Chemical mapping of a 177-nucleotide RNA with 2A3.
RNA sequence: GGGAACGACUCGAGUAGAGUCGAAAACGCGGCCGAGUACAUGGCCACCGGCCUGGCACGGCAGGGCUAUCAGGCCGAGUAUCACGGAACCGCGAUCGUGCCGGUGAUCCUGGGCAACCCGACCGUGGAGGGUCGCUUCGUUCGCGAAGCGACCCUCAAAAGAAACAACAACAACAAC
Reactivity to 2A3 in 0.01 (KOAc 150mM, MgCl2 10mM, bicine 150mM(pH8.5), 24C), signal-to-noise 2, nucleotides 027 to 126: c020g000c010g000g000c000c020g000a020g090u060a020c140a200u130g020g020c010c000a000c000c000g050g000c000c000u040g040g040c000a030c080g040g060c050a060g000g030g060c000u010a030u280c050a050g000g040c020c020g000a000g010u070a060u250c130a070c160g070g030a070a200c020c010g000c020g000a010u120c040g080u120g050c060c000g000g000u030g080a050u100c000c050u100g000g000g030c000a000a110c010c000c000g000a040c010c010g010u010g130
Conditions: 150 mM KOAc, 10 mM MgCl2 and 150 mM bicine (pH 8.5), 24 C.